The record gives the reactivity of an RNA of 207 nucleotides to DMS and 2A3. It was measured as part of the RMDB library M2RFPK. For DMS the reverse transcriptase was MarathonRT. For 2A3, 5,079 sequencing reads were counted. Values cover nucleotides 27 to 156. For 2A3 the reverse transcriptase was SuperScript II with manganese.

RNA sequence: GGGAACGACUCGAGUAGAGUCGAAAACCUAUCCAAAAUGAGAUCCCAUCUUGCGCACUGUGCUAAUUUGAGAUUCUCAUGCCUCCUACUUGGAGAGAUCUGGACUAGAAGUCAGGGCAUCUGACUCAAUACAUUCGUCAGUUCGCUGACGAAUGAACAAAAAGUUGAGGUUCGCCUCAACUUUUUGAAAAGAAACAACAACAACAAC
Reactivity to DMS in 0.01 (KOAc 150mM, MgCl2 10mM, bicine 150mM(pH8.5), 24C), signal-to-noise 3, nucleotides 027 to 156: c010c040u000a090u010c040c040a020a090a100a140u000g020a030g000a040u000c000c020c000a030u000c080u000u000g030c070g000c050a160c130u020g050u000g020c020u010a040a040u000u000u000g010a020g000a050u000u010c010u000c020a040u000g000c050c010u000c010c010u000a150c180u010u010g030g010a060g010a110g000a070u000c060u000g000g010a150c100u000a140g010a100a060g010u010c020a050g000g020g020c160a090u010c020u010g000a050c010u000c030a060a110u010a140c020a020u000u000c010g030u010c000a020g010u010u000c300g020c000u000g010a020c000g000a010a010u000g020a070a230
Reactivity to 2A3 in 0.01 (KOAc 150mM, MgCl2 10mM, bicine 150mM(pH8.5), 24C), signal-to-noise 7, nucleotides 027 to 156: c000c000u010a070u060c020c020a040a040a030a090u020g000a010g000a010u000c010c010c000a010u010c010u040u050g020c050g000c040a200c300u290g050u120g070c040u150a040a050u010u010u030g030a020g010a030u270u050c000u000c010a000u030g030c000c000u000c020c000u090a280c090u150u290g010g000a010g000a000g020a060u050c050u110g000g030a030c030u060a060g050a140a010g070u010c000a000g020g060g200c080a130u100c090u000g000a000c000u010c020a020a080u080a110c010a000u000u000c000g000u000c000a000g010u010u100c170g030c120u000g000a000c000g000a000a000u010g000a020a020